The record gives the reactivity of an RNA of 177 nucleotides to DMS. It was measured as part of the RMDB library OK2TST. The RNA was probed in 150 mM KOAc, 10 mM MgCl2 and 150 mM bicine (pH 8.5) at 24 C.

RNA sequence: GGGAACGACUCGAGUAGAGUCGAAAACACCUGUGCCUGUGUGCCUCCCCCGCUCCAGCUCAACUCCCACAGGAAGGGGCUUAUAAAAUUAUCUUGCACUUUGGGAAGGGGGAAGAGAAGCCCCUCCAAUGCUAUCCCAUUUCGAUGGGAUAGCAUUAAAAGAAACAACAACAACAAC
Reactivity to DMS in 0.01 (KOAc 150mM, MgCl2 10mM, bicine 150mM(pH8.5), 24C), signal-to-noise 1, nucleotides 027 to 126: c080a120c030c050u010g040u010g020c000c040u000g000u000g020u000g020c010c030u000c010c000c040c000c020g010c070u000c060c000a050g000c050u000c100a090a120c160u000c000c000c020a100c210a060g000g020a080a020g010g000g030g020c030u010u010a070u010a050a060a070a080u000u000a050u000c020u000u000g000c060a070c090u000u000u000g020g020g020a140a060g000g000g000g000g000a040a040g000a090g010a080a040g000c000c000c000c020u000c020c010